[RMDB]
RNA sequence: GGGAACGACUCGAGUAGAGUCGAAAACUUGAUGUGAAGAUUAAGGAAAAUAAUCAAUGUUAUGUACCUAAGGUAGUGCCUUGCACAUAAAAUACAGAUUACAGCUUUGCUGCUGUAAUUGCUCACCACCAGACUAGAAGGGUGGUAUUUUCCAGCAAAUCGCUAUACCAUUCGUGGUAUAGCGAUUAAAAGAAACAACAACAACAAC
Reactivity to 2A3 in 0.01 (KOAc 150mM, MgCl2 10mM, bicine 150mM(pH8.5), 24C), signal-to-noise 6, nucleotides 027 to 156: c020u050u100g050a070u100g050u070g070a090a120g040a120u140u230a110a110g070g040a060a040a000a040u100a050a050u090c090a070a090u150g020u060u050a030u050g030u090a080c020c050u070a070a010g030g000u020a040g070u070g190c020c020u020u040g020c020a020c010a050u130a010a080a020a010u180a060c060a050g070a010u000u010a000c010a010g000c010u120u160u270g130c210u090g000c010u010g030u010a000a010u010u010g000c000u010c040a020c000c000a000c000c010a050g090a210c080u120a060g070a190a030g160g000g000u000g000g000u000a000u000u010u000u000c020c000a000g020c060a100
Reactivity to DMS in 0.01 (KOAc 150mM, MgCl2 10mM, bicine 150mM(pH8.5), 24C), signal-to-noise 3, nucleotides 027 to 156: c030u000u000g000a120u000g030u010g010a140a170g000a160u000u020a100a070g010g010a050a050a080a080u000a080a070u000c050a130a100u010g010u000u010a030u010g010u000a040c030c210u000a080a050g020g030u010a130g020u000g020c030c010u010u000g030c010a060c020a030u000a020a030a040a070u010a120c040a230g000a040u010u000a030c050a000g000c020u000u000u000g030c160u000g020c000u000g020u010a020a020u010u000g010c070u010c080a120c010c010a040c020c010a120g000a140c050u000a170g010a180a250g030g000g020u000g020g040u000a000u000u000u000u000c010c020a150g000c130a050
An RNA of 207 nucleotides, treated with 2A3 and DMS and read out base by base. The 2A3 profile rests on 2,734 reads. Conditions: 150 mM KOAc, 10 mM MgCl2 and 150 mM bicine (pH 8.5), 24 C.